Description
An RNA of 177 nucleotides, treated with 2A3 and DMS and read out base by base. Source: RMDB library TTRDEL, as collected in RNAgym. For DMS the reverse transcriptase was MarathonRT.

RNA sequence: GGGAACGACUCGAGUAGAGUCGAAAAGAUAUGGACUUCGAAGAACUAUCCUACGACGAUCUCGGAAACGAGGGAGUAGAAUAGGGAGAAGUCCUAAGUCGAAGCAAGACGGUUCGCCGUCUUGCAAGUCAAAUCAGAUCUUCGGAUCUGAUUUGACAAAAGAAACAACAACAACAAC
Reactivity to 2A3 in 0.01 (KOAc 150mM, MgCl2 10mM, bicine 150mM(pH8.5), 24C), signal-to-noise 2, nucleotides 027 to 126: g040a000u100a040u160g000g010a010c000u040u000c050g300a300a090g010a060a050c010u010a010u040c000c000u010a020c020g270a100c030g000a050u030c000u000c010g050g040a070a090a060c010g000a010g000g000g020a010g030u010a010g020a020a020u020a000g000g000g000a040g000a020a000g000u000c000c000u010a060a000g010u000c010g020a060a000g000c010a000a000g010a000c000g000g060u050u080c300g070c090c000g000u000c000u020u000g000c020a030a000
Reactivity to DMS in 0.01 (KOAc 150mM, MgCl2 10mM, bicine 150mM(pH8.5), 24C), signal-to-noise 2, nucleotides 027 to 126: g000a070u000a300u030g000g000a030c000u000u000c000g000a150a170g000a150a140c000u010a000u010c000c000u000a020c010g000a080c300g000a050u020c000u000c000g000g010a080a090a190c010g000a010g000g000g000a040g000u000a000g020a010a000u000a000g000g000g000a150g010a030a000g000u000c000c000u000a000a010g010u000c050g000a150a160g000c000a010a010g000a010c000g010g000u000u010c230g040c010c010g000u000c000u010u000g010c000a020a030
Background
For DMS, 1,328 sequencing reads were counted. The reactions ran in a buffer of 150 mM KOAc, 10 mM MgCl2 and 150 mM bicine (pH 8.5), at 24 C.